[RMDB]
The data come from the RNA Mapping Database (RMDB), library RNAMAK. An RNA of 207 nucleotides, treated with 2A3 and read out base by base. Conditions: 150 mM KOAc, 10 mM MgCl2 and 150 mM bicine (pH 8.5), 24 C.
RNA sequence: GGGAACGACUCGAGUAGAGUCGAAAAUCCGAGUUCGCUCGGACCACUAGGGGUCGUGGGAGUCCACAGCAAUGAUGUACACUGAAGCCUCCACGGUGUAUUGAGCUGUGGCAUCGAUCACGACGGAGGCACCCGCAAGGCUUUGUUCGCAAAGCAAGAAACACACUCCAUUCGUGGAGUGUGUUUCAAAAGAAACAACAACAACAAC
Reactivity to 2A3 in 0.01 (KOAc 150mM, MgCl2 10mM, bicine 150mM(pH8.5), 24C), signal-to-noise 2, nucleotides 027 to 156: u020c000c000g000a000g010u190u210c240g060c130u000c000g010g060a050c030c020a130c080u140a050g000g000g060g000u040c010g010u050g000g100g010a020g050u050c000c000a000c000a000g000c010a020a300u040g010a000u030g010u020a010c000a000c010u030g040a180a000g040c000c000u030c000c000a010c000g040g010u000g010u000a000u000u060g020a040g000c000u010g010u000g020g000c020a050u040c070g040a060u140c030a010c050g070a030c010g010g000a010g000g020c020a060c000c020c010g070c110a090a020g110g010c010u000u040u020g070u150u120c070g040c160a020a000a020g040c010a050a040